The record gives the reactivity of an RNA of 177 nucleotides to DMS and 2A3. The data come from the RNA Mapping Database (RMDB), libraries RFM100 and RFMREP. For 2A3 the reverse transcriptase was SuperScript II with manganese.
RNA sequence: GGGAACGACUCGAGUAGAGUCGAAAAUGCCUCCGAUGCUGAUGACGAGGCGGCUGUUGCGCUGGCCGCUGCUGUACUUGCUGACGUUGCUGCAUUUGUCUCAGAUGUUUUCGCUGCGGCUGCCGAUCAACGGUAUAAACUUCGGUUUAUACCGUUGAAAAGAAACAACAACAACAAC
Reactivity to DMS in 0.01 (KOAc 150mM, MgCl2 10mM, bicine 150mM(pH8.5), 24C), signal-to-noise 6, nucleotides 027 to 126: u020g010c020c000u000c030c030g010a140u000g010c080u020g000a080u010g000a300c250g000a160g000g010c010g000g020c020u010g010u010u000g010c080g030c100u020g000g010c020c040g000c020u030g000c040u010g000u010a060c070u010u010g000c030u010g010a130c160g010u010u010g010c040u010g000c050a050u000u010u010g010u000c050u010c020a090g010a080u010g010u000u000u010u000c110g000c030u000g010c030g010g000c020u000g000c020c040g010a170u000
Reactivity to 2A3 in 0.01 (KOAc 150mM, MgCl2 10mM, bicine 150mM(pH8.5), 24C), signal-to-noise 9, nucleotides 027 to 126: u100g020c000c000u020c010c020g030a040u080g040c080u140g050a200u090g030a060c040g030a030g010g010c010g010g010c020u040g030u120u080g030c070g010c070u070g040g000c010c010g000c020u030g000c020u050g020u060a080c020u050u090g040c020u030g030a050c030g090u100u080g030c040u030g000c020a100u040u050u140g060u010c010u010c020a030g010a090u090g070u050u060u040u070c040g010c020u040g010c010g010g000c010u030g010c010c000g010a030u020